An RNA of 207 nucleotides, treated with 2A3 and read out base by base. For 2A3, 800 sequencing reads were counted. As a SHAPE reagent, 2A3 marks flexible, mostly unpaired nucleotides at the ribose 2'-OH. The RNA was probed in 150 mM KOAc, 10 mM MgCl2 and 150 mM bicine (pH 8.5) at 24 C.
[RMDB]
RNA sequence: GGGAACGACUCGAGUAGAGUCGAAAAUCCUAAGUCCUCUGGGAGUAUGCAUCGCUCAAUGACGGUAUCGGAAACGAUACUAAGACAGAGCGAGCAUACGAAGAACAGAGGAUAUGGAAAACUUAGAACGUGCAGGUUCGCCUGCACGUUCUAAGAAGAGGAAUUCAUUCUUCGGAAUGAAUUCCUCAAAAGAAACAACAACAACAAC
Reactivity to 2A3 in 0.01 (KOAc 150mM, MgCl2 10mM, bicine 150mM(pH8.5), 24C), signal-to-noise 1, nucleotides 027 to 156: u010c010c000u010a110a020g050u010c010c000u000c000u020g000g040g000a100g000u000a000u000g000c050a300u030c010g000c000u030c020a060a300u100g010a070c070g010g010u000a000u000c030g020g020a060a020a010c000g000a010u000a010c000u040a060a000g040a060c050a000g110a000g010c000g000a000g000c000a000u000a000c000g000a060a000g000a010a020c000a000g040a020g010g000a000u030a000u000g010g010a040a070a000a020c000u010u000a000g000a030a010c000g000u000g020c000a010g030g060u160u230c220g090c030c000u000g000c000a000c000g000u000u040c000u000a000a000g000a000a000